Overview
Chemical mapping of a 177-nucleotide RNA with 2A3.
RNA sequence: GGGAACGACUCGAGUAGAGUCGAAAAAAGCAGAUCGAAAAAUAGCUACUUUGUUAUUUGUCGUUGCUUUAAAAAGUCAACGGCAACUAAGCAUGCUUCAAGAAUUAGCUUUUUUCUGUUCAGAUCUCCCGAUAUGGUCAUUCGUGACCAUAUCGGGAAAAGAAACAACAACAACAAC
Reactivity to 2A3 in 0.01 (KOAc 150mM, MgCl2 10mM, bicine 150mM(pH8.5), 24C), signal-to-noise 2, nucleotides 027 to 126: a000a000g040c020a000g050a040u070c050g130a050a060a060a080a020u160a050g030c000u020a010c070u030u000u160g050u080u150a080u070u070u030g000u000c000g000u010u010g010c000u030u060u160a170a140a030a020a000g140u180c030a000a000c000g000g000c000a000a000c000u000a010a010g060c040a060u140g010c040u080u090c120a040a060g010a080a140u040u020a040g010c020u040u000u000u000u000u010c010u070g030u020u020c050a010g050a160u040c000u000